[RMDB]
RNA sequence: GGGAACGACUCGAGUAGAGUCGAAAAACCAAGUCUGGGGGCCGAUGAGGGUUGGCUCAAAGUCGGGUUUUGACUUGAAAACUCAAGCUGUGACCCCAAAACGAUGGAGGUAAAUGAGAAUCCUCCUAAAACUAUGGACACUUCGGUGUCCAUAGAACUAUAGUAUAGAGUUCGCUCUAUACUAUAGAAAAGAAACAACAACAACAAC
Reactivity to 2A3 in 0.01 (KOAc 150mM, MgCl2 10mM, bicine 150mM(pH8.5), 24C), signal-to-noise 3, nucleotides 027 to 156: a000c030c000a070a010g050u040c040u020g030g000g000g000g060c020c030g010a010u040g100a150g120g180g030u040u060g020g000c020u010c050a030a070a020g020u020c010g030g000g020u030u090u080u140g030a050c000u040u040g050a100a090a060a080c030u010c020a020a000g010c030u050g070u170g160a210c000c000c020c030a010a120a020a010c100g050a080u120g000g010a010g020g010u090a140a170a150u170g030a090g060a070a040u050c000c000u000c000c000u020a040a050a000a000c000u000a000u000g000g000a000c000a010c000u040u060c200g120g000u000g000u000c000c000a000u000a000g000a000a010
Reactivity to DMS in 0.01 (KOAc 150mM, MgCl2 10mM, bicine 150mM(pH8.5), 24C), signal-to-noise 1, nucleotides 027 to 156: a180c000c030a070a110g020u010c040u000g070g010g000g030g040c000c060g030a060u030g010a210g070g000g020u000u000g040g000c060u000c040a020a060a060g040u010c030g030g020g000u000u000u000u010g010a060c000u000u020g010a060a060a050a030c070u000c010a020a060g020c010u000g010u000g000a280c000c010c020c030a000a030a120a110c090g000a110u000g000g010a020g010g050u010a060a080a200u000g010a210g000a300a150u010c010c010u020c010c010u000a030a050a130a120c010u010a010u000g000g010a020c000a040c010u010u010c300g060g030u000g020u020c000c000a000u010a000g000a070a100
This 207-nucleotide RNA was probed chemically with 2A3 and DMS. Conditions: 150 mM KOAc, 10 mM MgCl2 and 150 mM bicine (pH 8.5), 24 C. For DMS, 2,168 sequencing reads were counted.